[RMDB]
Source: RMDB library OK2TST, as collected in RNAgym.
The record gives the reactivity of an RNA of 177 nucleotides to DMS and 2A3.
RNA sequence: GGGAACGACUCGAGUAGAGUCGAAAACGCACCACGCACUUCCUCGCGACGCACUGACGCAUCCCACCCUGACAUCCACGAUGGCGUUGAAAAAGAAGUUGCUGCCCCCUGGGGCGAAACGGAUGCAUCGCCUCAUAUCAUUCGUGAUAUGAGGCGAAAAAGAAACAACAACAACAAC
Reactivity to DMS in 0.01 (KOAc 150mM, MgCl2 10mM, bicine 150mM(pH8.5), 24C), signal-to-noise 4, nucleotides 027 to 126: c120g020c040a120c010c060a070c130g010c040a040c060u000u010c060c030u010c180g000c070g020a060c100g010c030a070c070u020g000a110c100g010c050a130u000c020c000c010a150c040c050c020u000g010a140c050a040u010c020c050a090c120g010a080u000g000g010c040g020u010u010g010a040a070a050a100a030g010a110a080g000u000u000g010c060u010g010c020c000c000c020c100u010g020g010g000g010c030g010a010a040a060c070g010g010a170u010g020c100a140
Reactivity to 2A3 in 0.01 (KOAc 150mM, MgCl2 10mM, bicine 150mM(pH8.5), 24C), signal-to-noise 1, nucleotides 027 to 126: c040g010c000a050c060c010a070c070g030c000a030c050u030u010c020c010u040c050g000c050g020a020c010g000c030a060c050u100g030a000c060g000c040a020u080c030c010c010a050c060c010c000u010g020a050c000a050u090c040c020a030c090g050a050u060g050g020c070g010u030u100g130a070a050a020a000a000g080a040a020g000u120u100g050c040u050g000c030c040c010c000c020u130g020g010g000g020c000g030a050a020a000c010g020g000a000u080g000c020a020
DMS (dimethyl sulfate) methylates the pairing face of unpaired adenines and cytosines. The RNA was probed in 150 mM KOAc, 10 mM MgCl2 and 150 mM bicine (pH 8.5) at 24 C.